[RMDB]
RNA sequence: GGGAACGACUCGAGUAGAGUCGAAAAAUGGCCGUCGAACACAUACACUUGAGAAUUCUGAGUGAGGGUACUGUAGCAUCGGGUUACUGUACACCAAUCCAGACGAUUCUCAGGUGGUUCGACGCCGUUAAUUAUCGAAGUUCGCUUCGAUAAUUAAAAAAGAAACAACAACAACAAC
Reactivity to DMS in 0.01 (KOAc 150mM, MgCl2 10mM, bicine 150mM(pH8.5), 24C), signal-to-noise 9, nucleotides 027 to 126: a050u010g000g010c090c070g030u000c010g010a010a000c010a140c160a250u040a300c010a010c000u000u000g010a010g000a020a010u010u000c000u000g000a110g000u010g000a300g000g000g020u000a000c000u000g010u000a000g010c010a300u030c190g010g020g010u000u000a000c000u000g000u000a000c000a130c000c000a020a220u000c010c000a010g000a050c300g000a100u000u000c000u000c000a000g000g020u000g000g010u000u000c000g000a010c010g010c000c000g000
Reactivity to 2A3 in 0.01 (KOAc 150mM, MgCl2 10mM, bicine 150mM(pH8.5), 24C), signal-to-noise 9, nucleotides 027 to 126: a010u080g010g010c160c050g000u000c000g000a000a000c030a000c010a080u300a110c010a010c010u000u010g000a000g000a010a020u230u010c010u010g110a130g140u010g010a020g000g010g000u010a000c010u050g000u000a010g010c020a080u280c210g220g210g000u000u000a000c000u010g000u020a000c170a180c020c000a000a010u000c000c000a010g010a030c060g090a020u010u000c000u000c000a000g000g000u010g010g000u000u000c000g000a000c000g000c000c000g000